This 177-nucleotide RNA was probed chemically with 2A3 and DMS. Values cover nucleotides 27 to 126. For 2A3, 860 sequencing reads were counted. For DMS the reverse transcriptase was MarathonRT. The data come from the RNA Mapping Database (RMDB), library OK2TST. For 2A3 the reverse transcriptase was SuperScript II with manganese.

RNA sequence: GGGAACGACUCGAGUAGAGUCGAAAAUGCAGGCCGCCUUGGCAAGCUCCACGCCGCUGGAAAUUAUCGGCCAUGGUUCCAAGCGCGGCAUUGGCCGUCCGGUGGAAGCAGGGCAUGUGCUGGAUGACGCAGUGGUACCUUUCGAGGUACCACUGCGAAAAGAAACAACAACAACAAC
Reactivity to 2A3 in 0.01 (KOAc 150mM, MgCl2 10mM, bicine 150mM(pH8.5), 24C), signal-to-noise 1, nucleotides 027 to 126: u110g090c040a000g080g000c000c000g040c050c030u080u080g000g000c070a000a000g080c010u000c000c010a020c000g010c020c040g020c070u020g060g110a000a170a000u300u110a050u210c030g000g000c000c000a050u150g100g000u160u040c020c030a120a050g080c120g040c070g000g050c020a010u030u030g000g000c020c000g000u020c010c010g000g020u120g000g000a080a010g040c060a030g030g000g030c020a040u150g080u070g080c000u020g050g090a100u050g020a000
Reactivity to DMS in 0.01 (KOAc 150mM, MgCl2 10mM, bicine 150mM(pH8.5), 24C), signal-to-noise 1, nucleotides 027 to 126: u000g000c050a060g010g080c030c020g000c080c070u000u000g000g000c180a080a110g000c080u030c050c050a160c300g000c010c010g000c040u000g030g000a110a180a060u000u000a160u000c070g030g000c010c040a090u010g000g000u010u000c000c050a090a050g030c230g040c000g030g010c020a080u000u000g000g030c000c000g000u010c040c020g010g000u000g000g010a050a050g030c110a070g000g000g060c070a100u000g010u000g000c030u020g020g000a060u000g010a180